[RMDB]
RNA sequence: GGGAACGACUCGAGUAGAGUCGAAAAUUGAACCGUUUCGACGGUUCAAAAAAAGAUAUGGAUGUCUAACAGGUACUUUGAUCGUGGUUCGGAAACGAACCACGGGAGUACCGUUAGAGCAUCCUAAGUCAAAAAGGUUCUCUUUCGAGAGAACCAAGGUAGAGGUAUCUUUCGAGAUACCUCUACCAAAAGAAACAACAACAACAAC
Reactivity to 2A3 in 0.01 (KOAc 150mM, MgCl2 10mM, bicine 150mM(pH8.5), 24C), signal-to-noise 1, nucleotides 027 to 156: u030u010g000a000a000c000c000g000u000u060u070c270g090a010c010g020g020u000u020c020a000a010a000a000a000a000a000g040a010u040a030u030g000g010a000u000g010u010c000u010a050a070c180a300g000g000u000a000c010u110u140u040g050a030u170c010g010u000g000g000u000u000c020g000g060a070a110a080c030g010a000a020c050c030a000c000g000g000g000a000g000u000a000c010c000g000u000u000a000g010a000g010c000a000u000c000c010u000a030a000g070u020c030a000a010a190a040a030g050g040u050u050c000u000c000u000u040u070c220g040a010g040a030g000a010a010c020c000a000a040
Conditions: 150 mM KOAc, 10 mM MgCl2 and 150 mM bicine (pH 8.5), 24 C. An RNA of 207 nucleotides, treated with 2A3 and read out base by base. For 2A3 the reverse transcriptase was SuperScript II with manganese. For 2A3, 1,083 sequencing reads were counted. Reactivities are rounded to 0.1 and cut off at 0 and 3.